[RMDB]
RNA sequence: GGGAACGACUCGAGUAGAGUCGAAAAGAGCUCGUCGGCGGCGCGCAUCCGGUGACGACCGAAUGGAUCACCGACGACGAAAUGGUCGCGCGCCCGGAGCUCGUGCGCACGAUGAGCGUGAAGCCGAAAUAGGAGGCUAGUUCGCUAGCCUCCUAUUAAAAGAAACAACAACAACAAC
Reactivity to 2A3 in 0.01 (KOAc 150mM, MgCl2 10mM, bicine 150mM(pH8.5), 24C), signal-to-noise 2, nucleotides 027 to 126: g030a000g000c000u000c020g080u000c030g130g040c040g040g000c030g020c000g000c020a190u020c040c040g060g020u020g020a050c040g040a020c010c000g140a100a120u280g040g060a100u070c010a030c090c110g130a060c090g020a020c000g030a100a100a080u170g060g010u050c040g010c030g000c030g040c070c010c010g000g010a000g000c000u000c000g000u070g170c020g010c000a070c050g100a050u090g040a000g040c030g000u020g070a040a010g070c030c000g030a090
Reactivity to DMS in 0.01 (KOAc 150mM, MgCl2 10mM, bicine 150mM(pH8.5), 24C), signal-to-noise 3, nucleotides 027 to 126: g000a140g020c010u000c000g030u000c010g010g010c030g010g020c020g040c110g020c020a170u000c070c000g020g010u000g000a090c050g000a080c010c010g020a100a110u020g000g000a170u000c030a080c100c060g020a120c180g010a070c080g000a070a120a100u020g000g000u000c020g010c060g020c030g000c050c010c020g000g010a140g010c020u000c010g000u000g010c000g000c010a100c080g010a060u000g000a060g000c010g030u000g000a090a150g010c020c030g000a070

Overview:
This 177-nucleotide RNA was probed chemically with 2A3 and DMS. The data come from the RNA Mapping Database (RMDB), library OK2TRN. The DMS profile rests on 3,351 reads. Values cover nucleotides 27 to 126. For 2A3 the reverse transcriptase was SuperScript II with manganese. The RNA was probed in 150 mM KOAc, 10 mM MgCl2 and 150 mM bicine (pH 8.5) at 24 C.